[RMDB]
RNA sequence: GGGAACGACUCGAGUAGAGUCGAAAAGAAUUGGUAUGUAAGCUACUUCUUCCAGUAGCUGCGUCAUAACAUCAAGGUUAUGCAUACUGAGCCGAAGCUCAGCUUCGGUCCUCCAAGGAAGACAAAAUACAGCUCAGCCCGUUCGCGGGCUGAGCAAGUAUUCUCGCAUGUUCGCAUGCGAGAAUACAAAAGAAACAACAACAACAAC
Reactivity to 2A3 in 0.01 (KOAc 150mM, MgCl2 10mM, bicine 150mM(pH8.5), 24C), signal-to-noise 1, nucleotides 027 to 156: g080a010a060u010u030g010g010u000a000u000g000u000a010a020g010c000u010a000c010u050u090c000u000u010c010c010a000g000u000a000g000c040u010g000c020g020u000c000a000u020a020a000c000a060u280c240a080a030g300g000u000u000a000u000g010c020a000u000a010c000u010g010a000g000c000c000g010a000a000g010c020u060c300a030g000c020u030u000c010g000g000u010c000c020u040c010c050a040a060g010g000a000a000g010a010c020a000a050a000a020u260a030c050a010g020c000u010c000a000g000c000c000c000g100u110u110c210g010c030g100g000g000c000u000g000a000g010c000a000a000